[RMDB]
RNA sequence: GGGAACGACUCGAGUAGAGUCGAAAACAUCUUAAUAGACCUGGUGUCUAUUGUGGCUCUGAUUUUAUUGACAUUGUCAGGCGGUUAGCAGUAUCACUGUUCCAGCCUAUUACUUAUUUCCAAUUGAUAAUCUCAGGCUUCGGCCUGAGAAAAAGAAACAACAACAACAAC
Reactivity to 2A3 in 0.01 (KOAc 150mM, MgCl2 10mM, bicine 150mM(pH8.5), 24C), signal-to-noise 3, nucleotides 027 to 129: c020a110u060c040u110u140a080a040u020a050g050a060c020c060u030g120g010u150g000u000c050u000a120u000u040g020u000g000g000c000u010c000u010g050a130u110u040u000u030a180u000u130g060a080c000a050u090u080g060u060c030a000g000g000c020g000g050u030u160a000g000c010a010g000u040a000u280c030a050c000u040g000u000u000c000c000a000g030c000c000u020a010u020u040a060c000u050u010a040u100u040u000c030c000a070a060u050u070g000a010u090a180a060
Reactivity to DMS in 0.01 (KOAc 150mM, MgCl2 10mM, bicine 150mM(pH8.5), 24C), signal-to-noise 4, nucleotides 027 to 129: c080a070u060c030u080u040a110a000u030a020g020a090c020c040u070g020g090u000g010u000c020u020a070u020u030g050u000g050g010c000u000c000u090g020a070u060u020u020u000a070u090u000g010a080c120a110u140u080g010u010c090a030g000g040c160g000g030u030u060a030g050c120a060g050u020a050u040c030a040c050u020g030u010u040c080c010a090g030c100c000u030a040u050u000a090c050u000u000a110u080u000u020c150c030a080a120u060u020g030a090u000a050a160